[RMDB]
RNA sequence: GGGAACGACUCGAGUAGAGUCGAAAAGGGAGAGCCGAGCAGAGGCAUAGCGAACUGCGCACGGAGAAGCCUUGAGGGAAAGCCGUAGGACCCGGGUUCGAUUCCCGGCGGCUCCACCGAAGGGCCAAUGGUACGGUAUGUUCGCAUACCGUACCAUAAAAGAAACAACAACAACAAC
Reactivity to DMS in 0.01 (KOAc 150mM, MgCl2 10mM, bicine 150mM(pH8.5), 24C), signal-to-noise 5, nucleotides 027 to 126: g000g000g010a110g000a120g010c050c030g010a110g030c040a020g000a110g020g010c110a090u000a120g010c070g050a060a060c050u010g030c100g020c080a060c090g000g010a090g010a110a200g000c000c000u000u000g000a300g000g000g000a110a150a040g000c010c000g040u050a110g020g010a080c190c040c000g000g000g030u010u040c180g010a300u020u060c010c000c020g020g000c060g000g010c000u000c070c080a300c010c000g000a250a030g000g000g020c000c160a040
Reactivity to 2A3 in 0.01 (KOAc 150mM, MgCl2 10mM, bicine 150mM(pH8.5), 24C), signal-to-noise 4, nucleotides 027 to 126: g050g040g000a100g010a030g030c020c030g000a020g000c040a010g030a040g060g000c040a060u090a020g060c080g040a070a060c040u050g020c040g040c040a030c070g070g030a090g020a110a010g030c000c000u010u020g020a020g010g020g000a040a030a020g000c010c000g030u080a110g040g210a120c030c000c010g000g010g000u050u090c070g010a040u080u070c000c000c000g000g000c000g010g010c000u030c020c010a030c000c010g010a020a020g000g000g000c010c010a030